[RMDB]
RNA sequence: GGGAACGACUCGAGUAGAGUCGAAAAGGACCGGCUGAGGGGUCCGACAUAGCCUCAGCAUCUAGCCUGUCACUCACCAGGCGAAUCAUGUGAGUGUUGAUGCUUUUGCAUCUUAAUCUGACUGAGUCGUAGCAGUCUCAUGAACUAUGACCUUAGACAGUAGUACUACUUUCGAGUAGUACUACUGAAAAGAAACAACAACAACAAC
Reactivity to 2A3 in 0.01 (KOAc 150mM, MgCl2 10mM, bicine 150mM(pH8.5), 24C), signal-to-noise 7, nucleotides 027 to 156: g000g000a000c000c000g030g000c010u000g000a010g010g000g000g000u010c020c010g020a010c020a070u170a040g070c000c000u000c000a000g000c000a030u070c060u080a030g000c000c000u010g030u050c010a000c010u000c000a000c000c000a000g000g010c030g010a040a070u150c060a040u090g000u000g000a010g010u000g030u030u110g010a000u000g000c020u070u220u240u300g000c010a000u000c000u010u140a140a120u070c130u130g010a010c010u000g000a000g010u000c000g000u010a010g000c010a010g020u010c080u070c120a160u200g070a060a020c000u000a000u020g010a000c000c010u060u020a150g030a190
Reactivity to DMS in 0.01 (KOAc 150mM, MgCl2 10mM, bicine 150mM(pH8.5), 24C), signal-to-noise 2, nucleotides 027 to 156: g020g010a110c000c030g040g010c020u000g010a050g070g010g010g040u000c060c040g000a060c110a100u010a190g030c010c000u000c030a030g030c010a140u020c080u010a200g040c000c000u010g000u010c040a100c030u000c000a020c040c030a060g000g020c020g010a060a070u010c160a060u000g020u000g010a030g040u010g020u000u010g020a090u000g010c020u000u010u010u000g020c020a110u000c010u000u000a100a150u000c040u000g010a100c010u000g000a120g010u000c030g000u000a010g030c010a070g010u010c070u000c160a110u000g000a090a090c020u000a040u000g000a030c070c010u000u000a020g000a270